[RMDB]
RNA sequence: GGGAACGACUCGAGUAGAGUCGAAAAAACUCAGAUUUGUACCAGUGGACAAGGAAGAUACUCAAUAUGCUUAUAAAACUCGAUUUCAAUUGGCUGUAGGUGAUAAUCGAGUUUUAGACAUGGCAAGUUCUUAUUUUGACAUUAGAGGUGUAUUAGACCCUGAGAGUGUAUUCGUACACUCUCAGGGAAAAGAAACAACAACAACAAC
Reactivity to DMS in 0.01 (KOAc 150mM, MgCl2 10mM, bicine 150mM(pH8.5), 24C), signal-to-noise 1, nucleotides 027 to 156: a050a070c050u000c020a130g010a130u000u000u000g000u010a050c040c020a130g040u010g000g010a070c060a010a070g000g010a050a020g010a050u010a030c060u010c060a040a300u020a020u000g010c020u010u010a090u010a040a000a000a020c010u000c000g030a060u000u000u010c040a050a120u000u000g030g010c090u000g030u000a100g060g000u000g010a100u010a010a010u010c010g020a040g010u000u000u000u000a020g010a000c020a020u040g020g060c300a010a040g020u040u000c040u000u010a120u030u020u000u000g000a100c020a060u000u000a130g010a090g040g000u000g040u000a090u000u010a180g010a200
Reactivity to 2A3 in 0.01 (KOAc 150mM, MgCl2 10mM, bicine 150mM(pH8.5), 24C), signal-to-noise 2, nucleotides 027 to 156: a000a000c190u180c070a130g010a150u080u150u090g000u020a000c000c000a000g050u050g030g070a050c020a060a020g070g020a020a010g000a080u090a070c050u020c100a070a020u120a020u200g000c000u200u070a020u020a160a020a040a040c000u000c000g010a010u000u000u000c020a100a030u100u120g050g000c040u070g140u200a050g000g140u050g010a050u130a080a000u000c000g020a000g000u000u000u020u000a000g020a030c030a020u060g010g030c020a070a020g020u050u020c020u080u140a230u060u200u030u040g070a030c020a030u000u130a030g010a010g020g050u090g010u000a050u130u080a090g100a130
Chemical mapping of a 207-nucleotide RNA with DMS and 2A3. For 2A3 the reverse transcriptase was SuperScript II with manganese. It was measured as part of the RMDB library OK3TST. The 2A3 profile rests on 629 reads. Reactivities are given for positions 27 through 156. Conditions: 150 mM KOAc, 10 mM MgCl2 and 150 mM bicine (pH 8.5), 24 C.